[RMDB]
RNA sequence: GGGAACGACUCGAGUAGAGUCGAAAAUCGACAUGAGGGGUGUUGAUGUCGGGGGAAACCCUCCCGUGAACCAGCGGGAUAGAGAGAAAGACAAAGACCGGGAAUAAACUAAAGCGCCUUAGUCUGGCAGUAUAAGUCGUUUCGACGACUUAUACUGAAAAGAAACAACAACAACAAC
Reactivity to DMS in 0.01 (KOAc 150mM, MgCl2 10mM, bicine 150mM(pH8.5), 24C), signal-to-noise 6, nucleotides 027 to 126: u020c040g010a060c050a050u000g010a060g010g010g000g030u010g010u000u000g010a190u010g000u010c020g030g000g000g010g000a100a060a150c030c010c020u020c020c010c000g020u000g010a100a170c140c120a180g000c020g010g000g010a040u010a040g010a180g000a120g000a040a050a040g010a060c050a050a060a160g000a050c060c150g000g000g010a080a070u010a060a080a080c080u000a070a080a110g000c060g020c020c020u010u010a060g010u000c030u010g020g020
Reactivity to 2A3 in 0.01 (KOAc 150mM, MgCl2 10mM, bicine 150mM(pH8.5), 24C), signal-to-noise 6, nucleotides 027 to 126: u070c000g010a000c020a050u110g030a100g020g040g010g030u070g010u080u050g050a070u040g010u010c000g000g000g000g000g010a020a050a050c000c000c010u010c010c000c000g010u030g000a070a110c050c030a010g000c010g010g040g000a010u090a030g120a000g000a000g020a000a070a000g030a020c030a030a080a010g010a040c000c010g010g020g040a050a120u150a120a110a020c100u120a080a110a030g040c020g020c000c000u010u020a020g020u010c030u060g070g000